Notes: Chemical mapping of a 177-nucleotide RNA with 2A3 and DMS. For DMS, 1,169 sequencing reads were counted. The reactions ran in a buffer of 150 mM KOAc, 10 mM MgCl2 and 150 mM bicine (pH 8.5), at 24 C. For 2A3 the reverse transcriptase was SuperScript II with manganese.
[RMDB]
RNA sequence: GGGAACGACUCGAGUAGAGUCGAAAAUGCUGCUGUGCUGUUCCUUCCUGGUGCCCAUUUGAUGGCUCAUCUUGCUUGAUGUCACUUCCUAUGGAAGAGCUUUCUUGGACUUCAGCCACCCAGCUUCCUACCCUUAGGCGUUCGCGCCUAAGGGUAGAAAAGAAACAACAACAACAAC
Reactivity to 2A3 in 0.01 (KOAc 150mM, MgCl2 10mM, bicine 150mM(pH8.5), 24C), signal-to-noise 1, nucleotides 027 to 126: u120g020c030u000g000c030u060g030u080g040c030u030g010u100u010c000c000u000u060c000c030u030g080g000u110g060c010c020c010a030u120u090u170g110a160u070g000g000c060u010c010a040u000c030u130u090g070c050u000u070g060a070u060g070u040c010a030c070u060u030c050c010u190a110u230g000g040a050a080g000a060g040c000u000u040u090c000u020u070g050g010a030c000u050u000c060a000g030c000c000a070c000c040c000a020g000c000u020u000c000
Reactivity to DMS in 0.01 (KOAc 150mM, MgCl2 10mM, bicine 150mM(pH8.5), 24C), signal-to-noise 1, nucleotides 027 to 126: u000g000c040u000g000c050u000g000u000g000c020u030g000u000u000c050c030u000u020c040c010u000g000g030u000g010c260c000c040a120u010u000u020g010a090u000g010g020c060u010c010a050u000c060u000u020g020c100u000u010g010a030u000g020u000c090a170c150u000u000c020c020u000a100u010g000g000a040a040g000a160g000c060u000u000u010c030u000u010g010g030a040c050u000u000c050a100g010c040c020a150c070c090c010a080g000c100u000u000c040